[RMDB]
RNA sequence: GGGAACGACUCGAGUAGAGUCGAAAACCGGCAUGGUCGAGCAAAUGCCACGGCUUGCCGGCAUCGAUGUCCGCACCGAUGUGAUCGACCCAAUGUACGACCCCAACCUGGCAUCACGCGGGCCAGAGGCCCUGCCAACAUUCGUGUUGGCAGGGCCAAAAGAAACAACAACAACAAC
Reactivity to DMS in 0.01 (KOAc 150mM, MgCl2 10mM, bicine 150mM(pH8.5), 24C), signal-to-noise 1, nucleotides 027 to 126: c000c010g010g000c000a060u020g040g040u000c000g000a300g000c000a070a130a110u030g000c030c030a160c000g000g000c020u000u000g010c030c000g000g040c020a020u010c010g010a070u000g010u010c090c040g030c070a050c140c010g000a070u000g010u010g000a020u000c040g010a050c010c020c090a050a100u000g000u000a110c060g050a060c020c000c000c030a030a130c110c000u000g000g060c000a040u000c040a070c080g010c180g000g000g060c010c030a000g000a170
Reactivity to 2A3 in 0.01 (KOAc 150mM, MgCl2 10mM, bicine 150mM(pH8.5), 24C), signal-to-noise 1, nucleotides 027 to 126: c000c000g010g010c040a080u110g030g000u040c020g000a000g050c040a210a130a300u300g020c010c030a150c040g000g030c050u010u010g000c000c000g030g000c000a000u040c020g080a030u100g060u030c050c020g000c040a030c040c020g030a050u080g100u090g060a110u100c050g050a080c000c000c000a050a040u180g030u190a060c050g070a080c020c010c020c000a000a070c020c000u000g000g000c020a040u040c000a030c110g030c020g060g030g000c010c010a030g070a080
This 177-nucleotide RNA was probed chemically with DMS and 2A3. Conditions: 150 mM KOAc, 10 mM MgCl2 and 150 mM bicine (pH 8.5), 24 C. 2A3 adducts were read by reverse transcription with SuperScript II with manganese. Source: RMDB library OK2TST, as collected in RNAgym. For DMS the reverse transcriptase was MarathonRT.